[RMDB]
RNA sequence: GGGAACGACUCGAGUAGAGUCGAAAAUAAUGGAAAUUCACAGUACGCCAAUGCCACUGCCGCCAUUCUCGUUGGUGGCGCGUUGUACGCACACAAGAAGGGCAUUGACAAAAUGCUUCUCGAUAAGGGAAAGACACUAAUCAAUUCGCCCGAGUUCGCCACAAUCAUAGUUCGCUAUGAUUGUGGCAAAAGAAACAACAACAACAAC
Reactivity to 2A3 in 0.01 (KOAc 150mM, MgCl2 10mM, bicine 150mM(pH8.5), 24C), signal-to-noise 2, nucleotides 027 to 156: u170a000a030u040g040g080a020a130a120u200u190c080a060c050a150g070u080a030c030g010c010c030a020a030u000g030c000c000a010c030u040g000c010c000g000c000c000a040u130u010c160u060c170g250u110u120g000g010u030g000g000c000g050c040g000u000u030g000u040a030c070g020c010a000c000a040c000a040a180g060a100a130g000g000g000c000a000u000u080g010a000c030a000a090a060a000u020g000c000u020u000c000u010c010g160a190u140a300a200g030g000g010a000a010a050g090a000c010a000c040u080a060a020u010c000a000a030u120u100c110g020c020c000c000g020a040g080u170u150c100
The data come from the RNA Mapping Database (RMDB), library OK3TST. An RNA of 207 nucleotides, treated with 2A3 and read out base by base. The RNA was probed in 150 mM KOAc, 10 mM MgCl2 and 150 mM bicine (pH 8.5) at 24 C.